[RMDB]
RNA sequence: GGGAACGACUCGAGUAGAGUCGAAAAGAUAUGGAUCGUGGUUGGAGCCUCUCGGAAACGAGAAGGCUAUGAAGACUAAACGAUCCUAAGUCAAAUCUGAUAGUCUUCUUCGGAAGACUAUCAGAAAGGUAAUGUACAACUUCGGUUGUACAUUACCAAAAGAAACAACAACAACAAC
Reactivity to 2A3 in 0.01 (KOAc 150mM, MgCl2 10mM, bicine 150mM(pH8.5), 24C), signal-to-noise 3, nucleotides 027 to 126: g020a030u090a010u130g000g010a000u010c000g040u010g020g020u020u040g040g010a000g000c020c010u000c000u000c010g020g000a090a050a030c030g010a020g040a150a140g020g000c000u010a090u050g030a010a010g000a000c020u100a300a220a080c020g000a000u010c000c000u010a120a010g010u010c040a000a020a260u010c010u000g000a010u010a000g000u010c000u020u000c000u060u060c300g050g000a000a000g000a000c000u000a000u000c000a010g000a000a000a000
Reactivity to DMS in 0.01 (KOAc 150mM, MgCl2 10mM, bicine 150mM(pH8.5), 24C), signal-to-noise 3, nucleotides 027 to 126: g010a030u000a300u000g000g000a000u000c000g040u000g000g010u010u000g000g000a050g010c000c000u000c000u000c000g000g000a110a080a220c000g010a000g000a040a070g040g030c000u000a020u010g000a140a220g000a010c000u000a070a110a020c010g000a000u000c000c000u000a010a040g020u000c030a080a130a140u010c000u000g000a010u000a000g000u000c000u000u000c000u000u020c230g010g000a040a020g000a000c000u000a000u000c000a000g000a010a050a070

Description: Source: RMDB library TTRDEL, as collected in RNAgym. The record gives the reactivity of an RNA of 177 nucleotides to 2A3 and DMS. The 2A3 profile rests on 7,204 reads. The reactions ran in a buffer of 150 mM KOAc, 10 mM MgCl2 and 150 mM bicine (pH 8.5), at 24 C.